The data come from the RNA Mapping Database (RMDB), library RFMREP. This 177-nucleotide RNA was probed chemically with 2A3 and DMS. 2A3 adducts were read by reverse transcription with SuperScript II with manganese. DMS adducts were read by reverse transcription with MarathonRT. The 2A3 profile rests on 7,839 reads. Values are in units of 0.01, from 0 to 300, in steps of 10. Reactivities are given for positions 27 through 126. Conditions: 150 mM KOAc, 10 mM MgCl2 and 150 mM bicine (pH 8.5), 24 C.

[RMDB]
RNA sequence: GGGAACGACUCGAGUAGAGUCGAAAAGCCCAGGCGGAGCUCGACCGCCGGUUCAAGCCAUGACGGGGUUCAUCGACGAACACCGCGCCAGGUACGGAGUCGAGCCGAUCUGCAGGGUGCUGCCGAUACUUAGGAUAAUCUUCGGAUUAUCCUAAGUAAAAGAAACAACAACAACAAC
Reactivity to 2A3 in 0.01 (KOAc 150mM, MgCl2 10mM, bicine 150mM(pH8.5), 24C), signal-to-noise 5, nucleotides 027 to 126: g020c000c010c000a000g090g020c020g010g010a030g010c010u000c010g010a020c040c160g100c000c000g020g000u040u190c080a080a030g020c030c010a120u090g050a100c000g000g010g000g020u010u010c020a120u190c180g260a190c120g000a030a010c090a050c060c010g040c020g020c040c020a020g000g000u030a060c010g010g000a010g010u000c010g000a000g000c020c000g080a100u000c010u030g010c020a010g030g020g020u120g030c040u060g040c010c030g010a040u030
Reactivity to DMS in 0.01 (KOAc 150mM, MgCl2 10mM, bicine 150mM(pH8.5), 24C), signal-to-noise 5, nucleotides 027 to 126: g010c010c000c000a100g010g020c010g020g010a110g020c010u000c000g010a030c010c070g010c000c000g020g010u010u010c280a130a140g000c000c010a090u010g000a150c010g010g000g000g020u000u000c020a140u000c260g000a170c210g000a010a010c010a050c000c000g020c020g010c120c020a030g000g020u010a090c030g000g010a270g000u000c000g010a030g010c040c180g000a120u010c010u000g020c030a080g000g000g010u000g010c070u010g000c010c010g000a240u000